About this RNA: The data come from the RNA Mapping Database (RMDB), library TTRDES. Structure probing data (DMS) for a 177-nucleotide construct. DMS adducts were read by reverse transcription with MarathonRT.
[RMDB]
RNA sequence: GGGAACGACUCGAGUAGAGUCGAAAAGAUAUGGAUUCAGUGGCUAGGCUACACUCGGAAACGAGUGCGGGCCUUGGACCCACAGAAUCCUAAGUCAAACAAAGGGAGCCUUCGGGCUCCCUUUGAAGGACAAUAAAAACUUCGGUUUUUAUUGUCCAAAAGAAACAACAACAACAAC
Reactivity to DMS in 0.01 (KOAc 150mM, MgCl2 10mM, bicine 150mM(pH8.5), 24C), signal-to-noise 2, nucleotides 027 to 126: g000a030u010a070u020g000g010a020u000u000c000a040g050u000g010g000c010u000a010g060g030c000u000a100c010a010c000u010c000g010g000a020a020a030c000g000a010g000u000g000c110g000g000g050c010c000u020u000g000g020a020c300c000c000a020c010a040g000a010a000u000c000c000u000a010a050g000u000c000a090a250a300c010a030a000a000g010g010g000a010g030c000c000u010u000c300g060g030g030c000u000c000c000c000u000u000u000g010a070a070